[RMDB]
RNA sequence: GGGAACGACUCGAGUAGAGUCGAAAAGAAAGAAAGUACUGGAAGUAUUGUGGGAAAUAAUGUGUAAAUCAUUGACCGUUCCUGCGCUGGUAAGAAUAAAAUUUUAGUCCAGACACCACCAGUAUAACCAAUCUAGUGACCUUCGGGUCACUAGAAAGUCCUAUGUGAGGUUCGCCUCACAUAGGACAAAAGAAACAACAACAACAAC
Reactivity to 2A3 in 0.01 (KOAc 150mM, MgCl2 10mM, bicine 150mM(pH8.5), 24C), signal-to-noise 1, nucleotides 027 to 156: g080a000a070a000g040a050a130a000g000u040a020c000u000g040g030a110a070g120u090a120u300u150g050u070g000g000g010a020a020a020u070a030a010u050g020u010g000u050a000a020a070u040c000a020u000u000g030a020c030c070g070u180u090c080c020u010g050c030g000c000u000g000g020u020a000a020g040a060a080u160a160a170a070a080u090u120u060u040a020g010u000c000c000a000g020a020c010a030c100c000a000c000c010a010g000u020a030u010a020a000c000c000a020a010u010c000u010a000g000u000g010a020c000c000u030u030c210g090g010g000u000c000a000c000u000a000g020a000a000a000
This 207-nucleotide RNA was probed chemically with 2A3.
As a SHAPE reagent, 2A3 marks flexible, mostly unpaired nucleotides at the ribose 2'-OH.
2A3 adducts were read by reverse transcription with SuperScript II with manganese.
The reactions ran in a buffer of 150 mM KOAc, 10 mM MgCl2 and 150 mM bicine (pH 8.5), at 24 C.
Values cover nucleotides 27 to 156.